[RMDB]
RNA sequence: GGGAACGACUCGAGUAGAGUCGAAAAAGCGUAGCGGUACGCCGCUACGCAAGGCGCAUUUGAACUGUAUUGUACGCCUUGCAUAAAGCAAAAGUACUAAAAAAAAGUGCCGUUACGACGGCACGAAAAAACAUCCAUUGGUUCGCCAAUGGAUGAAGAGUUGUUACCAGUUCGCUGGUAACAACUCAAAAGAAACAACAACAACAAC
Reactivity to 2A3 in 0.01 (KOAc 150mM, MgCl2 10mM, bicine 150mM(pH8.5), 24C), signal-to-noise 2, nucleotides 027 to 156: a000g010c010g000u000a000g000c010g040g030u040a050c200g060c020c000g000c000u030a000c000g000c000a000a000g010g000c000g010c000a030u050u070u260g120a120a100c070u080g040u150a110u070u110g010u040a040c020g000c000c000u000u040g050c040a110u150a150a150a030g000c010a070a010a000a020g040u030a060c080u170a000a060a090a140a050a010a000a000g000u000g000c000c000g000u000u050a040c270g040a000c020g090g000c000a000c000g000a010a000a000a000a000a000c010a000u020c000c000a010u000u020g000g000u060u070c130g000c090c010a000a010u000g000g000a000u010g000a020a000

The record gives the reactivity of an RNA of 207 nucleotides to 2A3. The 2A3 profile rests on 1,134 reads. Conditions: 150 mM KOAc, 10 mM MgCl2 and 150 mM bicine (pH 8.5), 24 C.